[RMDB]
RNA sequence: GGGAACGACUCGAGUAGAGUCGAAAAUAAAACCUAACGUUGAGCUUAUUACUUUUGAUGAAAUAGGAGAAGGAAAUAAUGUUGAUGAAUAUGACGUUAAUAAUACCAGCGUUUGUAGAUUAGUCGAUUACCCAUUAGGUGAACCAAUGCCAAUUAAAACCGCAAACAUAUUCGUAUGUUUGCGGUUAAAAGAAACAACAACAACAAC
Reactivity to DMS in 0.01 (KOAc 150mM, MgCl2 10mM, bicine 150mM(pH8.5), 24C), signal-to-noise 2, nucleotides 027 to 156: u000a060a060a100a300c000c010u000a090a080c070g030u000u010g010a100g010c020u000u010a110u000u000a080c080u000u010u000u000g000a110u040g000a060a030a110u000a140g030g000a130g030a100a040g040g010a040a040a060u000a040a050u020g010u000u000g000a060u010g000a110a130u000a110u000g010a040c000g030u040u020a050a110u010a130a080u010a090c060c040a080g010c010g050u000u010u000g030u010a080g010a070u010u000a080g010u000c010g000a130u010u000a060c030c000c010a210u000u010a050g010g010u000g000a110a080c070c040a030a140u010g010c040c070a020a150u000u000a040a110
Reactivity to 2A3 in 0.01 (KOAc 150mM, MgCl2 10mM, bicine 150mM(pH8.5), 24C), signal-to-noise 2, nucleotides 027 to 156: u040a000a030a000a000c010c000u000a010a000c030g000u000u040g040a010g020c040u070u030a030u100u130a160c030u050u110u120u110g080a200u040g030a090a070a100u090a030g020g060a050g010a090a000g030g060a000a200a040u060a000a060u100g020u070u050g070a070u030g020a060a020u070a060u180g000a000c020g000u010u050a020a010u100a040a020u060a220c070c000a020g000c000g030u000u050u080g010u010a060g020a220u120u040a010g000u020c020g020a020u000u050a040c010c040c000a000u030u090a010g000g000u030g020a020a020c000c010a010a010u130g010c130c070a000a000u300u300a110a300
An RNA of 207 nucleotides, treated with DMS and 2A3 and read out base by base. Source: RMDB library OK3TST, as collected in RNAgym. The RNA was probed in 150 mM KOAc, 10 mM MgCl2 and 150 mM bicine (pH 8.5) at 24 C. Reactivities are given for positions 27 through 156. For DMS the reverse transcriptase was MarathonRT.